The record gives the reactivity of an RNA of 177 nucleotides to 2A3 and DMS.
Source: RMDB library OK1LIB, as collected in RNAgym.
The 2A3 profile rests on 552 reads.
The RNA was probed in 150 mM KOAc, 10 mM MgCl2 and 150 mM bicine (pH 8.5) at 24 C.
Reactivities are rounded to 0.1 and cut off at 0 and 3.
For 2A3 the reverse transcriptase was SuperScript II with manganese.

RNA sequence: GGGAACGACUCGAGUAGAGUCGAAAACGGCCCCAAGGGAGUUGGAACCGCCGUCAACGAAACCCUGGUGCUGUGCGUGAUCGCGCUGUUCGCGACCAAUGUGGUGUUGACCACGAUCGGCGUGCGGCACCUCCGGCACGUUCGCGUGCCGGAGGUGAAAAGAAACAACAACAACAAC
Reactivity to 2A3 in 0.01 (KOAc 150mM, MgCl2 10mM, bicine 150mM(pH8.5), 24C), signal-to-noise 2, nucleotides 027 to 126: c000g040g000c000c000c000c010a020a080g120g040g000a160g000u020u030g010g030a090a120c010c020g000c000c000g010u020c010a000a050c060g130a050a010a020c030c000c000u080g000g030u000g020c000u030g040u180g080c020g020u090g020a110u080c050g000c030g000c130u090g060u060u110c000g000c050g060a080c020c120a040a170u170g070u120g020g080u110g050u220u300g180a080c000c000a000c010g020a060u040c000g070g040c000g010u030g010c010g030g000
Reactivity to DMS in 0.01 (KOAc 150mM, MgCl2 10mM, bicine 150mM(pH8.5), 24C), signal-to-noise 1, nucleotides 027 to 126: c120g000g010c030c080c010c070a170a080g040g040g000a190g000u000u000g000g000a080a130c070c060g040c100c100g000u030c020a040a090c030g000a060a150a110c000c010c030u010g040g010u000g010c010u000g000u000g000c050g020u000g040a020u000c060g010c110g000c210u020g020u000u060c030g000c050g000a020c030c010a100a200u000g020u010g030g030u030g000u000u030g000a110c000c010a000c000g010a050u040c010g000g000c100g000u030g030c000g010g000